[RMDB]
RNA sequence: GGGAACGACUCGAGUAGAGUCGAAAAGAUAUGGAAUCGUAAGAGCUUUUGACGCAGGGUAUCUCGGAAACGAGAUACAUUGCGAUAAGCUUAUCGAUUCCUAAGUCAAAGCUGGGUUCGCCCAGCACUUCCAUGCGUCGUUCGCGACGCAUGGAAGAAAAGAAACAACAACAACAAC
Reactivity to 2A3 in 0.01 (KOAc 150mM, MgCl2 10mM, bicine 150mM(pH8.5), 24C), signal-to-noise 1, nucleotides 027 to 126: g020a010u160a040u280g000g000a010a000u000c050g040u180a300a300g030a000g130c010u050u100u300u300g230a180c070g000c000a010g020g050g050u010a000u010c000u010c010g010g000a070a060a030c030g030a010g000a010u010a010c000a020u010u000g020c010g030a030u030a090a000g030c000u000u010a100u200c010g000a020u000u020c010c010u010a170a020g000u010c110a250a060a000g050c000u000g000g010g010u040u210c300g140c060c000c090a000g000c000a030

An RNA of 177 nucleotides, treated with 2A3 and read out base by base. It was measured as part of the RMDB library TTRDES. High 2A3 reactivity points to a flexible backbone, as in loops and unpaired stretches. For 2A3 the reverse transcriptase was SuperScript II with manganese.